[RMDB]
RNA sequence: GGGAACGACUCGAGUAGAGUCGAAAAGAUAUGGACGUCGGUUGCCUUGAUGACCAUUCUCGGAAACGAGAAUGCAAGAGGUUACCGAGCGUCCUAAGUCAAAGAAGCCUUCUUCGGAAGGCUUCAAUCCUGUCAUUAAGUUCGCUUAAUGACAGGAAAAAGAAACAACAACAACAAC
Reactivity to DMS in 0.01 (KOAc 150mM, MgCl2 10mM, bicine 150mM(pH8.5), 24C), signal-to-noise 8, nucleotides 027 to 126: g010a050u010a300u010g010g010a010c010g030u000c000g010g020u000u000g000c000c000u000u000g000a110u010g000a180c300c010a010u000u000c010u000c000g010g000a130a100a220c000g000a020g010a020a000u000g010c020a030a060g000a000g000g010u000u000a010c000c000g010a060g020c000g000u000c000c000u000a010a090g010u000c040a110a110a150g000a020a000g020c000c000u000u000c000u000u020c240g010g010a010a000g000g000c000u000u000c000a040a130
Reactivity to 2A3 in 0.01 (KOAc 150mM, MgCl2 10mM, bicine 150mM(pH8.5), 24C), signal-to-noise 4, nucleotides 027 to 126: g020a010u070a060u220g000g000a000c010g010u030c010g010g030u000u050g000c010c000u270u190g110a300u090g010a170c040c000a010u010u000c010u010c010g030g030a070a080a050c020g000a000g010a010a000u010g010c000a100a190g000a010g000g010u010u040a000c000c000g010a010g030c000g000u000c000c000u000a020a000g010u000c040a050a020a240g010a000a000g010c010c000u000u010c000u050u100c270g120g010a000a000g000g020c000u000u000c000a000a000